[RMDB]
RNA sequence: GGGAACGACUCGAGUAGAGUCGAAAAUUAAUCAGUUUGAGCAAUUCGGACAGGGUGUCGUCUUGCGCCAGCCAGUUGCGGUAGCGGCAUAAGGUGCUGUAAUCGGGGAUGCUCAGUUCGUCAAAACCGACGUCCAUCACUUCGGUGAUGGACGUCGAAAAGAAACAACAACAACAAC
Reactivity to 2A3 in 0.01 (KOAc 150mM, MgCl2 10mM, bicine 150mM(pH8.5), 24C), signal-to-noise 1, nucleotides 027 to 126: u300u120a000a130u090c030a000g020u040u000u000g090a030g070c130a090a000u040u050c000g030g000a000c080a090g000g000g000u080g010u010c180g300u000c130u100u100g030c000g000c030c000a130g070c050c000a060g000u160u090g070c000g020g130u040a010g000c000g090g000c000a000u030a220a250g000g080u000g010c000u130g060u300a240a050u130c000g090g000g000g000a090u120g010c060u000c010a050g060u040u050c000g000u000c050a000a000a090a090c000
The record gives the reactivity of an RNA of 177 nucleotides to 2A3. It was measured as part of the RMDB library OK1LIB. Reactivities are rounded to 0.1 and cut off at 0 and 3.